[RMDB]
RNA sequence: GGGAACGACUCGAGUAGAGUCGAAAAACCCCGCGAGCUGCCACCGCCGCUGCUGCCGGGGGAUCCGGUUACCGGCCCCUCUCCCCGGCCCAGCUGUCGGCCAUCCCUCACCCGGGCGCGGGGGUGGUGAUAACUAGCUCUUCGGAGCUAGUUAUCAAAAAGAAACAACAACAACAAC
Reactivity to DMS in 0.01 (KOAc 150mM, MgCl2 10mM, bicine 150mM(pH8.5), 24C), signal-to-noise 1, nucleotides 027 to 126: a130c000c000c010c030g020c110g010a200g010c140u000g000c070c090a120c070c120g030c050c140g020c010u010g000c050u000g020c020c010g040g000g000g010g000a050u000c020c030g010g010u020u000a140c110c000g000g000c300c020c130c080u010c030u000c000c020c020c020g020g000c060c300c040a020g000c050u010g010u010c060g000g010c030c010a070u010c000c000c030u010c060a110c110c060c140g010g000g000c030g010c010g040g010g000g030g000u010g010g000